[RMDB]
RNA sequence: GGGAACGACUCGAGUAGAGUCGAAAACCCCGCCGGCGGCACUUUCCGGGGACGGGUCAAAAGUCCGUUCCCUUGAUUGCCUUCCGAUCGGAAUAGCCCCCCUCCGUCGGAAGGACUAGGGCGGUGGGAAUGAUUUGUGAUUCGUCACAAAUCAUUCAAAAGAAACAACAACAACAAC
Reactivity to 2A3 in 0.01 (KOAc 150mM, MgCl2 10mM, bicine 150mM(pH8.5), 24C), signal-to-noise 5, nucleotides 027 to 126: c010c000c000c000g000c000c010g020g160c010g050g100c050a030c080u020u020u010c010c030g010g010g000g010a000c010g000g000g030u110c040a100a060a020a060g020u000c000c000g010u110u160c000c000c000u000u050g010a020u010u030g050c000c000u000u000c020c000g020a080u210c090g000g050a030a100u160a150g040c000c010c000c010c000c000u000c000c000g000u000c000g010g000a000a000g010g000a010c020u040a020g050g030g100c020g000g020u030g040g020
Reactivity to DMS in 0.01 (KOAc 150mM, MgCl2 10mM, bicine 150mM(pH8.5), 24C), signal-to-noise 4, nucleotides 027 to 126: c020c000c000c060g020c000c010g020g020c090g020g020c120a300c040u000u010u000c020c230g010g000g000g000a030c010g010g000g000u000c030a080a070a150a250g000u000c000c000g020u000u010c000c000c010u010u020g010a060u000u000g010c000c000u000u000c000c010g000a020u060c040g030g000a050a100u040a140g030c010c020c000c020c060c150u000c000c010g000u000c000g000g000a020a010g000g000a040c100u010a150g000g000g000c020g000g020u010g010g010
Source: RMDB libraries RFM100 and RFMREP, as collected in RNAgym. An RNA of 177 nucleotides, treated with 2A3 and DMS and read out base by base. 2A3 adducts were read by reverse transcription with SuperScript II with manganese.